[RMDB]
RNA sequence: GGGAACGACUCGAGUAGAGUCGAAAAGAUAUGGAUCGUGAGAGGGAGCUGAGUAUCGGAAACGAUACUGCAGCAUCGAUCUCUACGAUCCUAAGUCAAAAGAACGAUGACUUCGGUCAUCGUUCAACUAAACUUAUGACUUCGGUCAUAAGUUUAGAAAAGAAACAACAACAACAAC
Reactivity to DMS in 0.01 (KOAc 150mM, MgCl2 10mM, bicine 150mM(pH8.5), 24C), signal-to-noise 8, nucleotides 027 to 126: g000a010u000a070u020g000g000a000u000c000g020u000g010a060g010a020g010g010g010a080g050c000u000g000a080g000u000a010u000c000g010g000a010a010a030c000g010a010u000a000c000u000g020c010a010g020c000a290u000c270g000a080u000c000u000c000u000a020c000g010a010u000c000c000u000a000a080g000u010c010a120a090a140a140g000a010a010c000g010a010u000g000a020c000u000u010c260g040g010u000c000a000u000c010g010u000u000c000a040a180
Reactivity to 2A3 in 0.01 (KOAc 150mM, MgCl2 10mM, bicine 150mM(pH8.5), 24C), signal-to-noise 7, nucleotides 027 to 126: g000a000u010a010u060g000g000a000u000c010g010u110g230a140g010a010g040g100g060a110g000c000u000g010a000g000u010a010u000c010g000g000a010a000a010c010g000a010u000a010c010u140g300c020a000g000c000a020u230c040g010a020u000c000u000c000u010a010c000g000a000u000c000c000u000a000a000g010u000c010a030a000a040a250g000a010a000c010g010a010u000g010a000c000u100u150c300g040g000u010c000a000u000c000g000u000u000c000a000a000